[RMDB]
RNA sequence: GGGAACGACUCGAGUAGAGUCGAAAAUCUGUCACUGUCAGGAAAGUGGUAAAACUGCAACUCAAUUACUGCAAUGCCCUCGUAAUUAAGUGAAUUUACAAUAUCGUCCUGUUCGGAGGGAAGAACGACAACAGGUACUAUUCGUAGUACCUGUUGUAAAAGAAACAACAACAACAAC
Reactivity to DMS in 0.01 (KOAc 150mM, MgCl2 10mM, bicine 150mM(pH8.5), 24C), signal-to-noise 6, nucleotides 027 to 126: u010c050u000g000u000c030a060c030u000g010u010c040a040g020g000a040a080a090g020u000g010g010u000a010a020a050a130c190u010g010c140a120a030c030u000c040a020a030u000u000a020c020u000g020c170a080a090u010g000c020c020c010u000c100g000u000a020a030u000u000a030a030g010u000g010a100a080u000u000u010a050c090a070a090u000a100u000c090g000u000c010c010u000g010u000u000c050g010g000a050g000g000g000a080a050g000a060a070c160g000
Reactivity to 2A3 in 0.01 (KOAc 150mM, MgCl2 10mM, bicine 150mM(pH8.5), 24C), signal-to-noise 3, nucleotides 027 to 126: u010c010u030g050u020c020a010c060u060g000u030c000a000g060g040a110a050a040g050u040g030g050u060a030a040a000a110c070u100g000c020a020a030c010u000c030a030a090u040u040a060c020u040g050c090a040a140u170g030c020c000c000u030c010g000u060a030a050u050u030a060a040g020u010g140a030a030u050u050u040a050c070a060a040u040a040u240c030g050u000c000c000u030g030u150u040c050g060g000a040g000g040g020a020a040g040a050a010c060g030

Notes:
Structure probing data (DMS and 2A3) for a 177-nucleotide construct. DMS adducts were read by reverse transcription with MarathonRT. Conditions: 150 mM KOAc, 10 mM MgCl2 and 150 mM bicine (pH 8.5), 24 C. The data come from the RNA Mapping Database (RMDB), library OK2TRN.